[RMDB]
RNA sequence: GGGAACGACUCGAGUAGAGUCGAAAACGACUUUUUGAUGAAGGACAGGUUCAGACUUCGCGUGUCCUUUAUGUUUGUGUCUGAAUCGUAAUAAAACGGUGCCAAAACAAAGGGUGGUCCGAAGCUGCGAUAAGAAAAGAUUCGUCUUUUUUUAUCGAAAAGAAACAACAACAACAAC
Reactivity to 2A3 in 0.01 (KOAc 150mM, MgCl2 10mM, bicine 150mM(pH8.5), 24C), signal-to-noise 6, nucleotides 027 to 126: c030g020a030c010u040u040u010u040u140g090a090u090g010a030a020g010g010a020c020a000g010g010u030u040c000a000g020a080c020u050u040c040g000c010g040u020g010u030c000c000u030u030u020a050u040g040u000u030u050g120u010g020u010c030u050g060a040a040u040c020g030u060a090a100u110a160a270a040a010c060g040g040u080g040c010c010a090a110a060a070c040a030a130a040g060g030g030u060g010g030u050c010c020g020a030a000g030c010u010g000
Reactivity to DMS in 0.01 (KOAc 150mM, MgCl2 10mM, bicine 150mM(pH8.5), 24C), signal-to-noise 8, nucleotides 027 to 126: c090g000a070c040u010u010u000u010u020g010a090u020g000a060a040g000g010a040c000a070g020g010u000u010c020a040g000a090c030u010u010c070g010c070g010u000g000u010c020c020u000u000u010a020u020g010u010u010u010g010u010g000u000c030u020g000a080a020u010c020g000u010a070a130u040a060a080a080a060c060g000g010u010g000c070c040a020a060a050a060c110a040a050a060g000g010g020u000g000g020u010c030c030g010a040a060g010c060u010g010
This 177-nucleotide RNA was probed chemically with 2A3 and DMS. 2A3 adducts were read by reverse transcription with SuperScript II with manganese. Source: RMDB library OK1LIB, as collected in RNAgym. DMS (dimethyl sulfate) methylates the pairing face of unpaired adenines and cytosines.